Structure probing data (2A3) for a 177-nucleotide construct. Reactivities are given for positions 27 through 126.
RNA sequence: GGGAACGACUCGAGUAGAGUCGAAAAGACGCUGAUGCGAUCGACUGUAAGAUAGAUAGAUUGAGCAGACAGAUACGUACGGCAAGUAUCGUCGCCAGAAAUACAGUCGCAAAUUGCCGUACGAAGAAUAGGUGGUCGAGUUCGCUCGACCACCUAUAAAAGAAACAACAACAACAAC
Reactivity to 2A3 in 0.01 (KOAc 150mM, MgCl2 10mM, bicine 150mM(pH8.5), 24C), signal-to-noise 1, nucleotides 027 to 126: g050a000c010g000c080u020g000a170u090g040c030g000a080u010c020g000a010c000u000g000u000a000a000g070a240u140a190g140a100u160a090g070a110u140u000g140a050g000c060a050g040a000c040a000g040a010u010a130c000g000u020a040c010g000g000c000a020a020g000u010a000u150c000g010u000c000g050c050c000a080g080a000a000a000u040a000c000a000g020u000c000g000c000a110a110a010u010u000g000c000c000g020u040a000c080g060a000a000g010a090